[RMDB]
RNA sequence: GGGAACGACUCGAGUAGAGUCGAAAACGUCAGAGGACGAAGUCGGUCCAUCUGCGGUAAAAGACCGACAUAGAGUUCGAAGCAGAACGCACAACCGCAGACACACGAUUGGAGUGUGAAUGAGAGACAUACCUGGCGUCUUCGGACGCCAGGUAUGAAAAGAAACAACAACAACAAC
Reactivity to DMS in 0.01 (KOAc 150mM, MgCl2 10mM, bicine 150mM(pH8.5), 24C), signal-to-noise 1, nucleotides 027 to 126: c060g000u150c000a210g000a170g050g000a130c010g000a170a010g000u000c110g000g060u000c000c230a130u000c010u000g000c000g010g070u000a000a100a070a100g000a000c000c000g000a000c000a190u000a130g000a070g000u000u000c000g030a110a300g100c250a010g000a130a100c000g000c000a070c250a220a000c010c030g000c000a080g000a070c140a000c030a000c000g000a150u140u000g000g000a230g000u000g000u000g000a200a000u080g000a140g080a200g000a230
Reactivity to 2A3 in 0.01 (KOAc 150mM, MgCl2 10mM, bicine 150mM(pH8.5), 24C), signal-to-noise 1, nucleotides 027 to 126: c050g030u020c000a010g090a130g300g070a010c050g020a000a010g000u000c000g000g010u000c040c060a040u040c000u000g000c000g000g000u070a110a110a000a000g030a000c040c000g020a000c000a000u110a030g050a000g000u060u190c030g000a120a000g050c030a010g020a000a030c030g080c000a090c060a060a020c060c000g000c050a000g000a010c000a000c030a000c000g040a090u120u150g170g060a290g000u000g000u000g020a000a030u060g000a060g000a000g050a030